[RMDB]
RNA sequence: GGGAACGACUCGAGUAGAGUCGAAAAACAUAAGUUAGGUAGGGAAAGUUUUUCGGUGUAGGAUGAGACUAUAUAGUAUCAGCUAGUUGGUAAGGUAAAGGCUUACCAAGGCUAUGACGCUUAACUGGUAAGAGAUGACGUUCGCGUCAUCUCUUACAAAAGAAACAACAACAACAAC
Reactivity to DMS in 0.01 (KOAc 150mM, MgCl2 10mM, bicine 150mM(pH8.5), 24C), signal-to-noise 2, nucleotides 027 to 126: a090c060a090u010a060a050g010u000u000a020g010g000u000a060g020g010g010a050a080a090g010u000u000u000u000u000c020g020g020u000g010u000a040g000g000a120u000g010a090g010a090c070u000a070u000a110u000a030g000u000a080u010c030a030g020c010u010a090g000u000u000g000g000u000a010a020g000g010u000a070a070a180g010g010c000u000u000a010c000c010a010a030g010g010c000u000a120u020g000a030c050g010c010u010u000a050a030c140u000g000
Reactivity to 2A3 in 0.01 (KOAc 150mM, MgCl2 10mM, bicine 150mM(pH8.5), 24C), signal-to-noise 1, nucleotides 027 to 126: a010c030a040u140a080a040g050u040u060a020g000g090u000a000g000g000g000a100a040a000g000u050u000u000u060u090c050g010g010u050g050u040a050g020g080a060u110g020a030g000a020c020u000a010u030a040u030a290g070u020a000u060c010a000g000c020u020a050g040u000u010g010g000u000a000a040g000g000u040a040a030a030g050g000c000u000u000a020c000c000a000a010g000g030c020u010a100u090g000a010c010g000c000u030u040a120a010c010u090g060